[RMDB]
RNA sequence: GGGAACGACUCGAGUAGAGUCGAAAAUUCUGAAUGGGUGAUAAGAUUCAUCCAAGGCUAAAUAUAAGUUAGGAGAUCGAUAGCAUACAAGUACCGUGAGGGAAAGGUGAAAAGAACUUUGAAAAAAUCAAUCCAACGUAUUCGUACGUUGGAUUGAAAAAGAAACAACAACAACAAC
Reactivity to 2A3 in 0.01 (KOAc 150mM, MgCl2 10mM, bicine 150mM(pH8.5), 24C), signal-to-noise 2, nucleotides 027 to 126: u000u000c050u020g130a160a110u090g010g000g060u010g020a000u020a230a220g130a300u020u060c000a000u000c000c020a000a030g110g000c020u080a020a100a100u150a090u010a100a050g150u110u030a030g050g000a020g000a030u030c000g020a020u080a070g080c040a020u210a110c020a100a020g020u020a000c000c060g020u050g000a130g000g000g000a000a000a000g010g000u010g010a010a080a000a000g040a000a060c070u130u070u230g130a030a030a000a000a000a000
Reactivity to DMS in 0.01 (KOAc 150mM, MgCl2 10mM, bicine 150mM(pH8.5), 24C), signal-to-noise 3, nucleotides 027 to 126: u010u000c010u020g020a100a160u020g000g010g010u000g000a040u010a110a160g000a170u030u010c000a030u030c000c000a040a070g010g030c090u000a080a050a080u040a070u000a100a060g000u000u010a130g020g000a040g010a060u000c020g020a080u000a080g000c050a060u010a030c040a010a040g000u000a110c060c040g020u030g010a150g000g000g000a050a070a100g000g010u000g000a040a010a070a160g000a030a050c060u000u000u000g000a000a010a040a060a110a080
The data come from the RNA Mapping Database (RMDB), libraries RFM100 and RFMREP. Chemical mapping of a 177-nucleotide RNA with 2A3 and DMS. The RNA was probed in 150 mM KOAc, 10 mM MgCl2 and 150 mM bicine (pH 8.5) at 24 C. Reactivities are given for positions 27 through 126.